[RMDB]
RNA sequence: GGGAACGACUCGAGUAGAGUCGAAAAAUCAAGGUUUCGGUACAAGCUCAACCAGUUCCACAAGAAAUGGUUACUCGUCUCCAUGGAAACCGUGUUGCCGUCUCACCAAUUGUCACAGUUGAGCCAACCAGCGCAUUAAUUUCGAUUAAUGCGCUGGAAAAGAAACAACAACAACAAC
Reactivity to DMS in 0.01 (KOAc 150mM, MgCl2 10mM, bicine 150mM(pH8.5), 24C), signal-to-noise 2, nucleotides 027 to 126: a010u000c030a080a120g000g000u000u010u000c000g080g020u000a060c140a080a050g000c160u010c190a030a020c030c020a020g010u000u000c000c020a140c300a090a300g010a020a020a030u000g000g020u000u000a110c040u000c080g020u000c100u020c000c020a100u000g020g000a020a020a030c010c030g010u000g010u000u000g010c030c000g040u000c060u000c060a020c030c130a000a090u000u020g020u000c040a070c100a080g020u000u000g000a080g010c030c050a050a220